[RMDB]
RNA sequence: GGGAACGACUCGAGUAGAGUCGAAAAGCUUUUCAGUUCGCUGAAAAGCAAAGAAAAGAUCGAAUGAUCAACGCAGAAACGGAGCGAAAUCCGUAACAAAAAAAACACCGAGGUUCGCCUCGGUGAAGAGAUAUGGAUGGUUCGCCAUCCAUAUCUCAAAAGAAACAACAACAACAAC
Reactivity to DMS in 0.01 (KOAc 150mM, MgCl2 10mM, bicine 150mM(pH8.5), 24C), signal-to-noise 1, nucleotides 027 to 126: g000c000u000u000u000u000c030a020g010u000u010c210g000c000u000g000a000a020a010a010g010c020a030a090a070g000a110a150a090a070g020a000u000c000g040a100a030u020g030a000u000c000a140a300c100g000c050a120g000a060a170a050c020g000g020a000g000c000g060a110a090a010u000c000c010g040u000a060a070c090a000a000a030a030a190a030a130a100c030a000c000c000g000a000g000g010u000u010c220g020c010c000u000c020g010g000u000g000a020a020
Reactivity to 2A3 in 0.01 (KOAc 150mM, MgCl2 10mM, bicine 150mM(pH8.5), 24C), signal-to-noise 2, nucleotides 027 to 126: g000c000u000u000u000u010c010a020g010u000u100c160g040c070u010g010a010a000a010a000g000c010a000a010a010g020a000a100a000a020g010a010u010c050g090a190a300u300g010a010u020c010a030a040c010g000c020a010g180a100a150a010c010g000g000a000g000c050g140a100a000a000u000c000c000g030u040a040a040c070a020a040a060a010a000a000a000a030c010a010c000c010g000a000g000g040u040u080c160g070c040c010u000c010g000g000u000g000a000a010